[RMDB]
RNA sequence: GGGAACGACUCGAGUAGAGUCGAAAACAUCCAGUGUUCGCACUGGAUGAGAGGAAUGUGCAUCGGCAAACUACAUACCAAAAGCUGAGCUCGAAAGAGCAACGAUUUCGUCGUUCGCGACGAAAAACAGCAGUUAGGAUUUCGAUCCUAACUGCUGAAAAGAAACAACAACAACAAC
Reactivity to DMS in 0.01 (KOAc 150mM, MgCl2 10mM, bicine 150mM(pH8.5), 24C), signal-to-noise 1, nucleotides 027 to 126: c010a000u000c000c000a000g040u000g000u000u000c220g070c000a050c010u000g000g000a010u010g010a050g000a070g000g010a180a070u000g000u040g000c040a110u010c070g000g000c040a050a010a040c090u000a090c040a120u010a250c040c030a050a110a020a070g000c070u000g000a270g020c000u000c000g000a030a020a210g020a020g000c020a050a080c230g020a120u000u000u000c000g020u000c000g030u000u000c200g000c000g000a000c020g000a020a060a010a070a220
Reactivity to 2A3 in 0.01 (KOAc 150mM, MgCl2 10mM, bicine 150mM(pH8.5), 24C), signal-to-noise 2, nucleotides 027 to 126: c010a010u010c000c000a010g000u020g050u060u100c230g000c060a010c000u030g000g010a000u000g000a010g000a010g020g080a120a050u100g020u040g050c040a100u060c030g050g000c020a040a110a060c010u060a020c040a100u100a070c010c040a040a080a000a010g060c060u090g030a020g010c010u000c010g040a090a050a030g000a000g020c010a020a020c010g040a060u010u030u030c020g020u000c000g000u040u060c220g000c000g080a000c000g020a050a010a000a000a000